Structure probing data (2A3) for a 207-nucleotide construct. 2A3 adducts were read by reverse transcription with SuperScript II with manganese. Conditions: 150 mM KOAc, 10 mM MgCl2 and 150 mM bicine (pH 8.5), 24 C. Values cover nucleotides 27 to 156.
RNA sequence: GGGAACGACUCGAGUAGAGUCGAAAACCCGCCUGUUUACCAAAAACAUCACCUCUAGCAUUACUAGUAUUAGAGGCAAUGCCUGCCCAGUGACACCAGUUUAACGGCCGCGGUAUUCUGACCGUGCAAAGGUAGCAUAAUCACUUGUUCUCCAAAUCAUGACUAUGAUCUUCGGAUCAUAGUCAUGAAAAGAAACAACAACAACAAC
Reactivity to 2A3 in 0.01 (KOAc 150mM, MgCl2 10mM, bicine 150mM(pH8.5), 24C), signal-to-noise 2, nucleotides 027 to 156: c020c010c010g000c040c040u110g000u100u090u140a240c030c020a090a110a020a000a020c000a050u090c020a030c010c000u000c020u070a020g030c070a090u110u110a210c030u100a070g100u060a030u190u040a060g000a010g040g000c000a000a040u070g020c000c000u030g020c020c040c030a040g010u050g060a030c000a000c020c000a010g030u030u000u100a060a000c050g050g000c000c020g030c000g030g000u040a070u210u000c080u120g070a010c000c000g010u000g000c030a030a130a000g050g000u020a040g030c000a030u110a130a110u200c040a010c120u080u050g030u040u050c030u000c080c010a060a160a070u050